[RMDB]
RNA sequence: GGGAACGACUCGAGUAGAGUCGAAAACAAAAGGGGACAUUAGGUAUGAAAAGUAGUUCCCUGGCAUUUCAAAAUCUAUACCCCUUCUGCAUUGUUAGCUUAGCUACUAUAAGCUGACCAGGGGACGGAGGUCCCAUGAUUUCGAUCAUGGGACCUCAAAAGAAACAACAACAACAAC
Reactivity to 2A3 in 0.01 (KOAc 150mM, MgCl2 10mM, bicine 150mM(pH8.5), 24C), signal-to-noise 1, nucleotides 027 to 126: c020a010a080a000a050g030g010g020g030a020c070a240u100u070a040g030g000u020a010u070g030a010a000a010a070g080u140a020g020u010u010c000c010c040u000g030g020c040a070u040u000u060c050a120a140a070a120u060c020u070a050u060a070c000c020c000c050u020u040c080u100g070c050a170u130u060g030u020u080a010g000c000u060u000a000g000c000u070a080c000u150a170u010a200a000g000c020u030g000a090c000c000a000g000g010g000g000a000c020g040
Reactivity to DMS in 0.01 (KOAc 150mM, MgCl2 10mM, bicine 150mM(pH8.5), 24C), signal-to-noise 2, nucleotides 027 to 126: c030a060a030a010a030g000g000g000g000a100c170a080u000u000a010g010g010u000a130u000g000a040a080a110a150g000u000a120g010u000u000c000c000c000u020g010g020c090a070u010u010u000c030a040a090a130a070u000c030u000a040u000a080c010c000c020c000u000u000c070u000g000c160a120u010u000g010u000u000a020g010c010u000u000a000g000c150u010a110c210u010a080u000a000a000g010c000u000g000a060c000c050a020g000g000g010g010a010c080g030

Structure probing data (2A3 and DMS) for a 177-nucleotide construct.
For DMS, 1,719 sequencing reads were counted.
Conditions: 150 mM KOAc, 10 mM MgCl2 and 150 mM bicine (pH 8.5), 24 C.
High 2A3 reactivity points to a flexible backbone, as in loops and unpaired stretches.